[RMDB]
RNA sequence: GGGAACGACUCGAGUAGAGUCGAAAAGGGCCAACUUCUCUCAUGGCGCAAAUUCAACUUACGGGCUUACCAGCAUAGAGAGAUGGGAAACAUACUAUGACUGUGAACUUACCGUUAGUUACAAGAAGGCAAUACAAUACUUCGGUAUUGUAUUGCCAAAAGAAACAACAACAACAAC
Reactivity to 2A3 in 0.01 (KOAc 150mM, MgCl2 10mM, bicine 150mM(pH8.5), 24C), signal-to-noise 3, nucleotides 027 to 126: g040g010g020c000c000a000a070c300u100u030c060u000c000u010c040a060u060g000g000c000g000c080a060a100a030u190u080c020a040a010c000u020u040a000c010g030g000g020c030u010u010a080c010c020a000g000c000a010u000a000g070a000g000a000g020a040u020g010g030g050a070a100a070c000a020u070a030c020u010a040u080g260a300c010u090g080u120g060a030a020c060u040u110a070c010c020g000u050u030a010g000u020u040a100c080a060a060g010a100a020
Reactivity to DMS in 0.01 (KOAc 150mM, MgCl2 10mM, bicine 150mM(pH8.5), 24C), signal-to-noise 2, nucleotides 027 to 126: g000g020g000c000c000a020a070c300u000u040c050u000c010u020c060a130u000g040g000c000g000c010a070a150a110u060u000c130a040a040c030u000u000a000c030g000g000g000c080u000u000a090c220c000a000g010c010a060u000a020g000a100g010a070g050a040u000g000g070g000a150a040a080c100a080u030a120c000u000a040u010g000a100c010u010g000u010g000a000a070c200u030u020a190c050c000g020u000u000a020g010u000u000a030c210a050a080g000a040a060

The record gives the reactivity of an RNA of 177 nucleotides to 2A3 and DMS. The RNA was probed in 150 mM KOAc, 10 mM MgCl2 and 150 mM bicine (pH 8.5) at 24 C. For DMS, 2,249 sequencing reads were counted. As a SHAPE reagent, 2A3 marks flexible, mostly unpaired nucleotides at the ribose 2'-OH.